[RMDB]
RNA sequence: GGGAACGACUCGAGUAGAGUCGAAAACGUGGAUCCUGCACAGCAGGCGUACAAGAACUGGCAAAUACGCAACCUUACCAGCUUUAAGGGCUGCAUGAAGGAGGUGUGGAUCAAUCAUAAGCUGGUCCUUCUCAAAGCUAUUCGUAGCUUUGAGAAGAAAAGAAACAACAACAACAAC
Reactivity to DMS in 0.01 (KOAc 150mM, MgCl2 10mM, bicine 150mM(pH8.5), 24C), signal-to-noise 6, nucleotides 027 to 126: c090g010u000g030g000a070u000c010c010u010g030c020a080c100a140g010c060a060g000g010c100g020u000a050c130a090a100g000a080a070c050u000g010g020c040a110a110a150u010a060c080g000c060a100a100c010c020u000u010a070c120c020a010g000c010u000u000u010a110a100g000g000g010c030u000g000c110a090u010g010a060a060g010g000a100g000g020u000g020u000g010g000a050u000c070a070a090u010c120a080u010a060a100g020c030u000g010g000u010c210
Reactivity to 2A3 in 0.01 (KOAc 150mM, MgCl2 10mM, bicine 150mM(pH8.5), 24C), signal-to-noise 4, nucleotides 027 to 126: c030g050u060g090g030a050u050c010c010u060g020c100a120c030a220g040c020a010g030g060c030g040u040a030c040a080a060g040a150a030c030u030g070g000c040a040a050a050u120a040c040g010c010a010a090c010c000u010u030a040c020c000a010g030c030u080u100u110a110a040g130g000g000c010u020g000c020a060u190g080a070a020g070g020a040g000g040u020g010u030g020g030a070u070c040a050a070u050c040a070u040a150a030g020c010u020g020g020u020c000